[RMDB]
RNA sequence: GGGAACGACUCGAGUAGAGUCGAAAAAUCCUCAGGUUCAUAAGCUUGAUGAUUGGGUGUUCAUGCUCCAUGCAUGACAUGUGCCUCCUUUGAACCUUGUUACGACCUUGGCACAUUACCCAUCUGAAAAAGACGUUCGCGUUCGCGCGAACGUCAAGGGAUUACAACUGUUCGCAGUUGUAAUCCCAAAAGAAACAACAACAACAAC
Reactivity to 2A3 in 0.01 (KOAc 150mM, MgCl2 10mM, bicine 150mM(pH8.5), 24C), signal-to-noise 1, nucleotides 027 to 156: a000u030c000c000u020c000a000g010g000u020u000c000a030u040a250a000g100c040u010u230g050a020u060g010a000u150u300g000g020g000u050g130u140u030c000a000u000g000c000u160c270c080a040u250g000c000a000u000g030a020c040a000u000g010u030g000c000c000u010c000c000u000u000u070g000a010a000c000c010u000u190g140u190u170a050c080g070a140c000c050u040u010g000g000c000a000c000a000u010u100a040c030c000c000a000u000c030u020g050a170a000a030a030a170g010a000c000g000u010u000c030g030c000g000u020u020c130g000c010g000c000g230a000a010c000g020u000c000a000a000